[RMDB]
Chemical mapping of a 207-nucleotide RNA with 2A3. 2A3 adducts were read by reverse transcription with SuperScript II with manganese. The reactions ran in a buffer of 150 mM KOAc, 10 mM MgCl2 and 150 mM bicine (pH 8.5), at 24 C.

RNA sequence: GGGAACGACUCGAGUAGAGUCGAAAAGGACAACCGUCCAGUACAGCGACGAGGACGCGAAGCGCCUCGGCCUGACCGGCAAGGACACCGGCUCCGCCGCCGCCAAACGCAAGGCCGCCGCAGACGCGAAGGCAGAAGCAGACGCGAAGGCCGACGCAUAGGACAUGUACUUCGGUACAUGUCCUAUAAAAGAAACAACAACAACAAC
Reactivity to 2A3 in 0.01 (KOAc 150mM, MgCl2 10mM, bicine 150mM(pH8.5), 24C), signal-to-noise 1, nucleotides 027 to 156: g020g010a020c060a100a010c210c020g020u050c000c010a030g020u000a080c070a040g020c010g110a020c040g020a030g020g000a140c050g060c160g140a120a060g040c030g000c040c000u000c000g020g000c000c000u030g030a090c000c010g000g010c000a030a060g110g000a030c000a030c080c030g090g030c100u080c060c040g070c040c030g020c000c020g000c010c020a200a150a030c040g080c120a070a010g000g030c010c020g050c010c010g030c000a050g030a040c080g020c000g020a080a050g080g060c000a030g040a130a000g030c020a020g020a080c050g040c000g020a000a090g000g000c000c000g010a000c010g040c000